[RMDB]
RNA sequence: GGGAACGACUCGAGUAGAGUCGAAAACUGGCAGAAGCAGAGGCAGCUCUAGGAUGUGUGAAAUGCUGAUCACUCACAGGGAUGCGCUGCCUCUUUAAUAUCUUGCUUGCAGAUGCAUUUUCUAGCUGACCACGCUAUUAAGAGCUGCCAUCAAUCAUCACGUUUUACGAUUCGUCGUAAAACGUGAAAAAGAAACAACAACAACAAC
Reactivity to 2A3 in 0.01 (KOAc 150mM, MgCl2 10mM, bicine 150mM(pH8.5), 24C), signal-to-noise 3, nucleotides 027 to 156: c040u000g090g000c080a000g040a190a040g080c100a010g000a090g060g010c000a000g000c000u000c010u030a060g040g130a150u110g020u020g000u020g030a040a090a080u130g000c030u050g020a090u130c020a050c090u150c020a130c100a040g060g030g010a030u040g010c010g020c010u000g000c010c000u010c000u010u010u000a010a010u010a020u050c020u030u150g040c020u050u080g000c000a020g080a260u020g000c040a080u020u030u060u070c040u030a010g000c000u000g040a060c000c000a000c020g010c010u070a030u080u110a150a030g010a000g000c020u000g010c010c030a070u030c010a010a080u090c040a010
Reactivity to DMS in 0.01 (KOAc 150mM, MgCl2 10mM, bicine 150mM(pH8.5), 24C), signal-to-noise 2, nucleotides 027 to 156: c050u000g030g030c040a120g010a060a200g000c030a130g010a170g000g040c010a010g030c000u000c020u000a170g030g010a140u000g030u000g020u010g000a070a110a100u000g020c060u010g010a090u000c040a030c060u000c070a080c090a080g030g030g000a070u000g040c030g000c010u020g020c010c000u000c000u000u000u000a070a200u020a130u000c000u010u010g030c070u010u000g000c010a040g000a120u000g000c000a050u000u000u000u000c050u000a060g070c070u000g000a130c050c040a040c070g000c030u020a120u000u000a090a090g010a060g030c000u000g010c000c000a060u000c050a080a150u000c050a280
Notes:
An RNA of 207 nucleotides, treated with 2A3 and DMS and read out base by base. In probing experiments dimethyl sulfate is read out at A N1 and C N3, which are open when not base-paired. Source: RMDB library OK3TST, as collected in RNAgym.